[RMDB]
RNA sequence: GGGAACGACUCGAGUAGAGUCGAAAAGAUAUGGAAUCAUGGUGGAGAAUCCGACACUAUUCGGAAACGAACGAAUGUUCGAUUCGCUGACAUGAUUCCUAAGUCAAAAGGUAACUUCGGUUACCAACUUAUUGUUUACGUUCGCGUAAACAAUAAGAAAAGAAACAACAACAACAAC
Reactivity to 2A3 in 0.01 (KOAc 150mM, MgCl2 10mM, bicine 150mM(pH8.5), 24C), signal-to-noise 7, nucleotides 027 to 126: g020a020u100a030u180g000g010a010a000u010c000a000u010g040g030u080g020g030a050g000a040a010u060c120c080g030a000c010a020c090u130a050u040u010c010g030g040a210a160a090c070g030a050a010c020g050a280a300u060g010u050u040c010g000a000u010u000c020g000c050u030g000a010c000a010u000g000a000u010u000c000c000u000a050a020g050u000c020a000a040a050a150g010g000u010a010a010c010u050u150c300g100g000u010u000a010c000c000a000a000
Reactivity to DMS in 0.01 (KOAc 150mM, MgCl2 10mM, bicine 150mM(pH8.5), 24C), signal-to-noise 9, nucleotides 027 to 126: g010a030u000a300u000g010g010a010a000u000c000a000u000g000g020u000g010g000a050g000a020a010u000c010c050g010a010c030a020c080u000a300u000u000c000g000g000a090a090a160c030g000a010a020c140g010a060a030u000g010u000u000c300g000a010u000u000c000g000c000u000g000a030c010a010u000g010a010u000u000c000c000u010a010a090g010u000c040a070a060a090a100g000g010u000a000a010c000u000u010c200g030g010u000u000a000c000c000a070a080